[RMDB]
This 207-nucleotide RNA was probed chemically with 2A3 and DMS. It was measured as part of the RMDB library OK3TST.
RNA sequence: GGGAACGACUCGAGUAGAGUCGAAAAACUGGACGGUGGAGAAACCUUUACCGAAUCUAGUGCAGUAGUCGCAUGGAAGCAAGCAUGUAACUCUUUGCAAACACAAACUACAAUAGUUCCUGUACUAUUGUCACUUGCAAUAGUUAUCGCUGCAAUCCAGCUCCUAGUACUUCGGUACUAGGAGCUGAAAAGAAACAACAACAACAAC
Reactivity to 2A3 in 0.01 (KOAc 150mM, MgCl2 10mM, bicine 150mM(pH8.5), 24C), signal-to-noise 2, nucleotides 027 to 156: a030c000u000g000g000a000c000g010g030u010g050g000a030g000a090a230a070c050c000u020u030u020a010c000c020g020a050a100u000c010u000a010g020u040g050c030a030g040u180a010g080u090c050g030c120a080u090g030g040a120a030g030c110a060a050g010c040a090u250g030u030a000a020c010u030c070u130u040u030g000c010a020a120a040c090a010c040a180a280a040c040u060a000c020a010a020u000a010g010u040u150c010c110u160g070u090a010c000u010a010u010u010g020u030c020a030c110u000u030g000c000a000a000u010a020g000u020u010a030u090c070g000c030u020g000c020a030a040u070c040
Reactivity to DMS in 0.01 (KOAc 150mM, MgCl2 10mM, bicine 150mM(pH8.5), 24C), signal-to-noise 1, nucleotides 027 to 156: a030c000u000g040g010a140c050g000g020u030g010g010a020g000a120a100a160c180c000u010u000u010a060c000c000g010a060a150u000c030u000a010g010u030g020c040a070g000u000a040g000u020c020g000c000a130u000g000g000a100a110g030c150a050a130g010c040a050u010g010u000a050a010c030u000c110u000u000u000g000c000a140a070a220c090a100c090a130a040a130c000u000a090c000a040a010u000a050g010u010u010c240c240u010g030u010a040c010u000a000u020u010g000u000c080a060c130u000u000g000c020a070a050u000a060g030u000u000a010u000c110g000c000u000g010c000a140a300u010c020

The reactions ran in a buffer of 150 mM KOAc, 10 mM MgCl2 and 150 mM bicine (pH 8.5), at 24 C.